[RMDB]
RNA sequence: GGGAACGACUCGAGUAGAGUCGAAAAUCAUCUUCGGAUGAAUUAAGACCUUUGUGCUCUGACGCAUGUUGUCAGUCCUAUCGUCCCAUUGGGACGAACAAUGGACUUGGAUUUACAUGCGGAUGAGCACUCUGGUGAUGUCUAUGUUCGCAUAGAAAGGAUCCACUCAAUUCGUUGAGUGGAUCCUAAAAGAAACAACAACAACAAC
Reactivity to 2A3 in 0.01 (KOAc 150mM, MgCl2 10mM, bicine 150mM(pH8.5), 24C), signal-to-noise 2, nucleotides 027 to 156: u030c000a000u010c000u100u120c270g170g020a010u000g000a020a090u300u180a140a040g190a080c000c020u020u020u000g000u000g000c000u000c000u010g100a030c000g000c010a000u010g000u020u000g000u040c000a000g000u000c000c000u020a030u000c000g000u000c000c000c040a110u160u300g000g000g000a000c000g040a000a050c150a120a290u150g000g000a010c000u060u180g250g020a050u120u130u170a000c000a000u000g000c010g000g000a010u040g000a000g000c000a000c000u000c000u010g000g020u060g060a130u180g200u070c000u030a030u070g000u000u170c250g050c130a080u080a000g010a020a180